[RMDB]
RNA sequence: GGGAACGACUCGAGUAGAGUCGAAAAGUAUUAUGCAAUGGUGGGUGAUAUUGGAAAGUAUAUUGAGAACUCAGGUCUGACCGCUUUCUUCCUGACUUUGAAAUAUGCAUUAGGGACAAAAUGGAGCUACUACUAGGUCAUUCGUGACCUAGUAGUAAAAAGAAACAACAACAACAAC
Reactivity to DMS in 0.01 (KOAc 150mM, MgCl2 10mM, bicine 150mM(pH8.5), 24C), signal-to-noise 5, nucleotides 027 to 126: g010u000a100u010u010a110u010g010c100a070a080u000g000g020u000g000g010g000u000g010a080u000a080u010u010g020g010a090a080a110g020u000a020u000a050u000u000g000a300g000a010a030c100u000c010a010g000g010u000c030u000g000a110c160c140g010c120u000u010u000c030u000u010c010c010u000g010a030c130u000u000u000g010a160a020a020u000a020u000g000c020a050u000u010a100g000g000g000a140c100a030a020a050a070u000g000g010a090g000c180
Reactivity to 2A3 in 0.01 (KOAc 150mM, MgCl2 10mM, bicine 150mM(pH8.5), 24C), signal-to-noise 2, nucleotides 027 to 126: g020u050a060u300u080a110u180g060c070a040a060u080g000g030u090g050g010g030u060g080a050u060a080u230u130g040g020a030a050a060g010u010a020u000a010u040u060g010a030g010a040a000c020u010c020a000g000g040u040c070u060g060a040c000c050g040c160u090u100u000c000u030u010c010c000u000g000a020c020u020u010u020g030a020a030a030u070a020u040g000c020a020u030u080a020g000g020g000a010c050a030a100a040a100u110g100g030a020g010c040
Structure probing data (DMS and 2A3) for a 177-nucleotide construct. For 2A3, 2,964 sequencing reads were counted. Source: RMDB library OK2TST, as collected in RNAgym. The DMS profile rests on 6,355 reads.